[RMDB]
RNA sequence: GGGAACGACUCGAGUAGAGUCGAAAAGACGAACGAAAACACAAAUGUUCCACGGUGCAGAAGGGUCCCUCACAUGAGGAUCACCCAUGUAACUCGGACAGGAUAUGCUUUUGGGAAAAAGAGAGAAGACAUAUUAAACUUUCGAGUUUAAUAUGUCAAAAGAAACAACAACAACAAC
Reactivity to DMS in 0.01 (KOAc 150mM, MgCl2 10mM, bicine 150mM(pH8.5), 24C), signal-to-noise 8, nucleotides 027 to 126: g020a110c090g010a140a130c040g000a040a030a040a030c050a040c060a040a180a120u010g010u010u010c010c050a070c170g000g010u000g010c010a040g010a080a110g020g000g000u000c140c010c000u000c020a140c200a120u010g000a020g000g000a040u010c160a030c010c000c000a080u000g000u000a030a040c030u010c170g010g000a030c030a030g000g000a150u000a050u000g000c020u000u000u000u000g000g000g010a050a050a050a050a070g000a120g010a110g010a090a100
Reactivity to 2A3 in 0.01 (KOAc 150mM, MgCl2 10mM, bicine 150mM(pH8.5), 24C), signal-to-noise 7, nucleotides 027 to 126: g070a020c060g020a090a010c020g030a030a030a050a000c060a010c010a060a090a070u070g040u160u050c020c010a010c060g030g010u020g000c010a010g030a280a140g050g000g000u020c010c030c000u020c000a220c030a200u300g010a010g010g010a030u130c030a020c000c000c000a000u020g010u010a060a030c010u000c040g010g000a000c010a010g030g020a050u050a020u220g010c010u060u060u050u050g050g040g020a060a080a020a060a010g100a010g010a010g040a110a040
Record summary
An RNA of 177 nucleotides, treated with DMS and 2A3 and read out base by base. Values cover nucleotides 27 to 126. The data come from the RNA Mapping Database (RMDB), library M2PK90. 2A3 adducts were read by reverse transcription with SuperScript II with manganese.